Background: This 207-nucleotide RNA was probed chemically with 2A3.

[RMDB]
RNA sequence: GGGAACGACUCGAGUAGAGUCGAAAAAAGAGUUUCUCUGUUCUCUAAAAUAGAAACAGAGUGGUGGAGUCAUUAUGACCCUCUUAGAGUUUCCAGUUUCUCUAAAAAACUGGUGGCGAGCCUGCUCAAAAUCAUUAGACCUUCGGGUCUAAUGAAACCAUAACCAUGAGUUCGCUCAUGGUUAUGGAAAAGAAACAACAACAACAAC
Reactivity to 2A3 in 0.01 (KOAc 150mM, MgCl2 10mM, bicine 150mM(pH8.5), 24C), signal-to-noise 1, nucleotides 027 to 156: a000a000g010a000g000u000u000u020c000u000c000u000g020u050u000c000u010c030u040a230a300a060a110u100a230g080a050a000a000c000a000g000a020g000u020g000g000u050g010g070a220g020u020c030a070u030u300a120u300g010a010c010c020c000u000c020u020u120a050g000a000g000u020u000u030c020c000a010g000u000u000u000c020u040c040u040a000a000a000a000a000a000c000u000g000g010u010g010g030c020g020a020g070c050c110u100g030c010u090c100a000a030a060a090u020c000a000u000u000a000g020a000c000c000u050u080c300g060g000g000u000c000u010a000a000u000g000a000a000a010

Conditions: 150 mM KOAc, 10 mM MgCl2 and 150 mM bicine (pH 8.5), 24 C. For 2A3 the reverse transcriptase was SuperScript II with manganese. Values cover nucleotides 27 to 156. 2A3 is a SHAPE reagent: it acylates the 2'-hydroxyl of flexible nucleotides of all four kinds. It was measured as part of the RMDB library M2RFPK.